Structure probing data (DMS) for a 177-nucleotide construct. Source: RMDB library 15KREP, as collected in RNAgym.
[RMDB]
RNA sequence: GGGAACGACUCGAGUAGAGUCGAAAAGCGGGGAGGAGUGUUACCCUACGGGAACUGCUGAGUGCCCCUGACGUCCAGACCCUCCCCCGUCCGGGAGAAUGGAGAUUCGGGAACGUGAAGCAUGGUGGAUCUUCACCAAGUUCGCUUGGUGAAGAUCAAAAGAAACAACAACAACAAC
Reactivity to DMS in 0.01 (KOAc 150mM, MgCl2 10mM, bicine 150mM(pH8.5), 24C), signal-to-noise 1, nucleotides 027 to 126: g010c110g010g020g010g030a100g020g000a100g000u000g000u010u000a060c080c020c030u000a150c180g000g000g000a120a060c050u000g010c120u000g010a100g010u000g020c060c020c000c020u010g010a120c250g000u020c050c030a060g000a150c090c020c010u000c000c000c020c000c030g000u000c070c060g000g000g010a060g000a070a030u000g010g020a100g010a070u020u000c070g010g000g000a070a040c050g000u040g000a110a080g010c040a060u010g030g000u020g000

For DMS the reverse transcriptase was MarathonRT.